[RMDB]
RNA sequence: GGGAACGACUCGAGUAGAGUCGAAAAGCUUUCUUUCUUCCAUUGACCCACUGCUCGAGGACGUCCUCCCUGUCUCCUCGGUUCUUCUUCGAUCCGGACCGGCUCAUCUCGGCAAGGGGCGGCAGUCAGACAGAGAUGUUCGCAUCUCUGAAAAGAAACAACAACAACAAC
Reactivity to 2A3 in 0.01 (KOAc 150mM, MgCl2 10mM, bicine 150mM(pH8.5), 24C), signal-to-noise 9, nucleotides 027 to 129: g020c060u090u220u080c030u080u220u030c030u140u060c080c050a130u020u140g020a020c010c010c030a080c050u010g000c010u000c010g000a010g030g110a210c010g020u020c000c010u050c000c000c000u010g020u020c020u010c010c010u020c010g020g030u040u020c020u110u020c010u060u080c050g070a090u010c020c010g020g040a050c010c000g020g000c010u020c030a130u020c040u020c030g030g000c040a060a080g030g000g000g000c000g010g010c000a010g040u070c030a020g010a060
Reactivity to DMS in 0.01 (KOAc 150mM, MgCl2 10mM, bicine 150mM(pH8.5), 24C), signal-to-noise 9, nucleotides 027 to 129: g030c200u050u000u030c060u040u070u010c010u060u040c060c070a180u050u050g000a080c000c010c060a060c050u040g000c000u000c000g020a010g010g020a170c060g050u020c030c000u000c030c000c010u020g000u000c010u000c000c000u000c030g070g000u000u000c040u000u000c060u020u020c100g010a140u030c050c050g000g010a110c110c060g000g030c030u020c050a050u040c050u000c050g000g000c100a120a070g000g000g000g000c060g000g000c010a050g040u040c020a070g000a210